[RMDB]
Notes:
Structure probing data (DMS) for a 177-nucleotide construct. It was measured as part of the RMDB library TTRDEL. The DMS profile rests on 5,044 reads. The RNA was probed in 150 mM KOAc, 10 mM MgCl2 and 150 mM bicine (pH 8.5) at 24 C.
RNA sequence: GGGAACGACUCGAGUAGAGUCGAAAAAUUCAAAGAUAUGGAGCAUCUCUGAUGAAUGACCCACCUUGGAUUUAUCGGAAACGAUUGUCAGGUGCAUUCGGACGAGAUGCUCCUAAGUCAAGUAAAAGUAUACUCUCUAGUUCGCUAGAGAGUAUACAAAAGAAACAACAACAACAAC
Reactivity to DMS in 0.01 (KOAc 150mM, MgCl2 10mM, bicine 150mM(pH8.5), 24C), signal-to-noise 6, nucleotides 027 to 126: a100u010u000c060a090a140a100g000a020u000a300u010g000g000a020g010c010a010u000c000u000c000u010g000a300u020g000a030a020u000g000a230c210c300c060a020c020c010u000u000g020g000a020u000u030u010a000u010c010g000g000a060a090a150c020g000a010u000u000g000u000c010a020g010g020u000g000c010a010u000u000c010g010g010a300c270g000a020g000a000u000g010c000u000c000c000u010a010a030g010u000c050a080a120g010u010a050a050a090a110